Overview
The record gives the reactivity of an RNA of 177 nucleotides to 2A3 and DMS. Values cover nucleotides 27 to 126. 2A3 is a SHAPE reagent: it acylates the 2'-hydroxyl of flexible nucleotides of all four kinds. The RNA was probed in 150 mM KOAc, 10 mM MgCl2 and 150 mM bicine (pH 8.5) at 24 C. 2A3 adducts were read by reverse transcription with SuperScript II with manganese.

RNA sequence: GGGAACGACUCGAGUAGAGUCGAAAAGAAGUCCGACGAGAUCGCGGCUGGGGCUUAGGACCCCACUCCUGCGAGACAGGGGUAAUCCUAAACAGGGUUUUCACCCUUCCUUUAGUUUCCUUCCUCUUAGUAAAUACAACUUCGGUUGUAUUUACUAAAAAGAAACAACAACAACAAC
Reactivity to 2A3 in 0.01 (KOAc 150mM, MgCl2 10mM, bicine 150mM(pH8.5), 24C), signal-to-noise 3, nucleotides 027 to 126: g040a060a000g040u030c030c000g030a070c020g070a140g070a240u130c020g020c020g040g000c010u020g020g010g010g010c040u020u030a040g060g040a100c000c020c010c000a000c000u010c000c020u040g030c050g170a150g030a070c020a010g020g000g010g010u010a020a020u020c000c000u010a020a020a010c140a040g000g000g020u070u070u220u290c130a120c000c010c000u020u070c020c000u050u100u100a030g010u040u060u020c010c000u010u050c000c020u040c000u000
Reactivity to DMS in 0.01 (KOAc 150mM, MgCl2 10mM, bicine 150mM(pH8.5), 24C), signal-to-noise 3, nucleotides 027 to 126: g000a090a080g020u000c000c020g020a100c060g010a140g020a120u000c040g020c050g030g020c300u010g000g000g020g020c070u000u000a050g010g000a140c010c000c000c020a020c040u000c010c000u000g020c020g010a100g010a180c040a040g000g000g000g020u000a060a040u010c010c000u020a020a060a130c250a060g000g000g010u000u000u000u000c120a080c010c000c000u010u000c030c020u000u000u010a100g000u000u000u000c040c020u000u000c010c050u010c120u000